[RMDB]
RNA sequence: GGGAACGACUCGAGUAGAGUCGAAAAGCAAAGGCAGUGACUGCUCCAGAUACAGCCGAGGAAAGUGAGACCAGAAGAUGGGCAAAGUAUGUUCAACAAAAGAGGGUCAAUCCAUUCUUUGCCUUAAGUUCCUGUAUGCAUUCGUGCAUACAGGAACAAAAGAAACAACAACAACAAC
Reactivity to DMS in 0.01 (KOAc 150mM, MgCl2 10mM, bicine 150mM(pH8.5), 24C), signal-to-noise 2, nucleotides 027 to 126: g010c020a100a100a060g020g000c000a110g010u000g010a090c050u000g020c040u010c060c060a100g000a140u010a050c070a100g010c010c060g020a140g000g000a070a130a090g000u000g000a080g020a090c030c040a050g000a090a060g000a090u000g010g000g030c010a020a030a060g010u000a040u000g000u000u000c260a070a070c160a030a060a090a130g010a100g020g000g010u000c120a040a140u000c120c010a050u000u000c030u000u010u000g000c000c020u000u000a030a140
Reactivity to 2A3 in 0.01 (KOAc 150mM, MgCl2 10mM, bicine 150mM(pH8.5), 24C), signal-to-noise 2, nucleotides 027 to 126: g020c020a070a020a030g020g000c050a010g030u010g130a070c000u030g000c020u000c010c000a020g000a060u060a110c050a020g090c060c030g000a040g010g070a100a070a020g110u140g040a020g040a080c000c020a030g030a200a020g080a170u230g030g000g000c020a010a000a010g030u020a020u110g070u030u120c030a050a010c010a010a210a020a010g160a070g070g020g020u090c040a050a040u000c030c000a020u010u010c000u040u040u040g010c010c000u030u060a080a020
About this RNA
The data come from the RNA Mapping Database (RMDB), library OK2TRN. Structure probing data (DMS and 2A3) for a 177-nucleotide construct. 2A3 adducts were read by reverse transcription with SuperScript II with manganese. The reactions ran in a buffer of 150 mM KOAc, 10 mM MgCl2 and 150 mM bicine (pH 8.5), at 24 C.